Source information:
Conditions: 150 mM KOAc, 10 mM MgCl2 and 150 mM bicine (pH 8.5), 24 C. The record gives the reactivity of an RNA of 177 nucleotides to 2A3 and DMS. Source: RMDB library OK1LIB, as collected in RNAgym. The DMS profile rests on 2,720 reads. Values are in units of 0.01, from 0 to 300, in steps of 10.
[RMDB]
RNA sequence: GGGAACGACUCGAGUAGAGUCGAAAAUUCAUCACGGAAUUUGGUCUGGAUUUGGAAGAAGUUCAGCGGCAACUGCUUAUAAGAGCUGAGUUCAUUACGCACCAGGUCGGUGAUAACUUCUUCGUGGUAGGUGGGGUAAUUUCGAUUACCCCACCUAAAAAGAAACAACAACAACAAC
Reactivity to 2A3 in 0.01 (KOAc 150mM, MgCl2 10mM, bicine 150mM(pH8.5), 24C), signal-to-noise 2, nucleotides 027 to 126: u070u040c010a070u030c040a010c020g040g100a080a110u120u000u130g170g000u000c040u020g090g100a260u060u030u090g080g000a000a000g000a000a010g040u010u020c010a020g030c000g100g000c000a130a100c080u160g000c000u100u140a120u090a300a000g000a000g140c030u040g070a000g070u000u000c030a000u000u240a040c160g030c000a040c000c070a110g040g030u030c000g030g090u000g000a070u070a060a000c010u040u010c010u000u030c010g060u070g020g070
Reactivity to DMS in 0.01 (KOAc 150mM, MgCl2 10mM, bicine 150mM(pH8.5), 24C), signal-to-noise 2, nucleotides 027 to 126: u000u040c010a040u050c110a080c170g010g010a020a050u010u000u000g010g010u010c080u040g000g000a120u010u020u000g000g010a000a040g000a010a020g000u010u000c020a020g000c090g000g000c060a140a160c280u050g000c020u020u020a190u070a170a200g010a070g000c060u000g000a090g010u030u030c010a210u020u010a100c090g030c140a080c090c070a070g000g030u000c000g020g000u010g000a040u010a040a040c060u000u000c030u000u000c020g020u020g000g010

The 2A3 profile rests on 785 reads.